Conditions: 150 mM KOAc, 10 mM MgCl2 and 150 mM bicine (pH 8.5), 24 C. The record gives the reactivity of an RNA of 177 nucleotides to DMS and 2A3. The 2A3 profile rests on 3,285 reads. DMS adducts were read by reverse transcription with MarathonRT. The DMS profile rests on 856 reads. Source: RMDB library M2PK50, as collected in RNAgym.

RNA sequence: GGGAACGACUCGAGUAGAGUCGAAAAAGACUUGUAUUCGUACAAGUCUACAGAAUUUUCGCUAGCACACGAUCACACCUAGCGUUCUCAAUAACGAUCGAACAACGUGUCAAUUCGUUGACACGAACAUCGAGUCGAAGUUCGCUUCGACUCGAUGAAAAGAAACAACAACAACAAC
Reactivity to DMS in 0.01 (KOAc 150mM, MgCl2 10mM, bicine 150mM(pH8.5), 24C), signal-to-noise 2, nucleotides 027 to 126: a000g020a010c000u010u000g000u000a030u000u000c190g050u000a040c020a000a000g020u000c000u010a160c290a110g030a070a280u000u010u000u000c010g000c000u000a030g000c200a120c290a030c000g030a050u000c000a080c200a120c120c000u010a030g000c000g020u000u030c000u000c000a120a080u000a070a080c200g000a050u000c010g000a200a040c270a060a090c020g010u000g010u000c000a050a010u000u010c140g000u020u000g000a050c000a020c000g000a010a130
Reactivity to 2A3 in 0.01 (KOAc 150mM, MgCl2 10mM, bicine 150mM(pH8.5), 24C), signal-to-noise 2, nucleotides 027 to 126: a020g010a000c000u000u000g000u010a030u070u060c260g000u040a000c010a010a000g000u000c000u000a000c000a060g300a210a150u000u000u000u040c000g010c000u000a010g000c080a040c010a010c110g040a020u040c020a040c030a040c120c000u000a000g010c000g000u000u000c000u000c000a030a080u180a040a030c090g020a020u010c010g040a060a030c060a050a020c010g010u000g000u000c000a010a010u030u080c130g080u080u020g000a010c000a000c000g010a020a010